[RMDB]
RNA sequence: GGGAACGACUCGAGUAGAGUCGAAAACUCACCCGGGACGCGGCGGACGGCUCAGGACGACGGUUGCACCCCCCGCGGCGGUCCCUGCUAGCCGGACACCGCUGGCAACCCGGCGCCAAGACGUGCGGACUAUAAGCACAUUCGUGUGCUUAUAGUCAAAAGAAACAACAACAACAAC
Reactivity to 2A3 in 0.01 (KOAc 150mM, MgCl2 10mM, bicine 150mM(pH8.5), 24C), signal-to-noise 8, nucleotides 027 to 126: c020u010c020a070c000c000c000g000g000g010a020c060g000c010g020g000c000g010g020a060c010g000g000c010u000c040a010g000g020a020c160g010a000c050g170g030u030u020g010c030a300c000c000c000c000c000c000g000c000g000g000c020g070g010u010c010c000c000u000g000c060u080a010g000c010c000g000g060a050c050a050c060c000g000c010u000g040g010c000a020a070c000c000c000g000g000c000g000c000c010a130a050g170a080c070g070u180g040c010g020
Reactivity to DMS in 0.01 (KOAc 150mM, MgCl2 10mM, bicine 150mM(pH8.5), 24C), signal-to-noise 6, nucleotides 027 to 126: c030u010c040a130c180c010c000g020g030g010a060c300g010c010g010g040c000g020g020a110c010g000g000c000u000c020a020g000g030a110c130g010a030c020g040g060u010u000g030c020a150c050c000c010c000c020c040g000c000g020g010c010g000g010u000c030c010c020u000g000c250u030a020g000c000c010g020g020a130c150a090c000c010g010c000u000g000g010c070a130a300c010c010c000g010g000c040g000c020c030a100a120g010a130c210g000u020g000c050g010

This 177-nucleotide RNA was probed chemically with 2A3 and DMS.
Values cover nucleotides 27 to 126.
2A3 adducts were read by reverse transcription with SuperScript II with manganese.
The reactions ran in a buffer of 150 mM KOAc, 10 mM MgCl2 and 150 mM bicine (pH 8.5), at 24 C.